An RNA of 207 nucleotides, treated with 2A3 and read out base by base.
Source: RMDB library M2RFPK, as collected in RNAgym.
The reactions ran in a buffer of 150 mM KOAc, 10 mM MgCl2 and 150 mM bicine (pH 8.5), at 24 C.
The 2A3 profile rests on 441 reads.
For 2A3 the reverse transcriptase was SuperScript II with manganese.

[RMDB]
RNA sequence: GGGAACGACUCGAGUAGAGUCGAAAAGUUAGGCGAGGCUCCUAUACAAACACAGGUUGCUGAUCUGACGACGUCGAGAGACGCCCAAGAUUAGGACAGGAUAAAUCGAACCAAGGUAUAUCCCCAUAAAACUCGGAACACUUCGGUGUUCCGAGAAGGAUAUACCCGUCUUCGGACGGGUAUAUCCAAAAGAAACAACAACAACAAC
Reactivity to 2A3 in 0.01 (KOAc 150mM, MgCl2 10mM, bicine 150mM(pH8.5), 24C), signal-to-noise 1, nucleotides 027 to 156: g030u040u040a040g010g000c090g000a020g020g020c020u080c030c010u030a030u060a180c130a060a270a010c150a010c040a150g170g000u020u140g150c010u000g010a060u070c010u050g020a030c020g020a080c010g000u000c000g000a020g000a000g000a150c000g000c000c060c020a030a020g050a000u030u030a000g100g010a000c050a030g080g020a010u050a230a110a040u090c020g020a030a060c020c020a050a050g120g020u060a010u000a030u110c000c030c040c000a050u180a050a080a020a050c000u000c000g000g000a000a000c000a000c010u070u130c250g100g000u000g000u000u000c000c000g000a000g020a000a000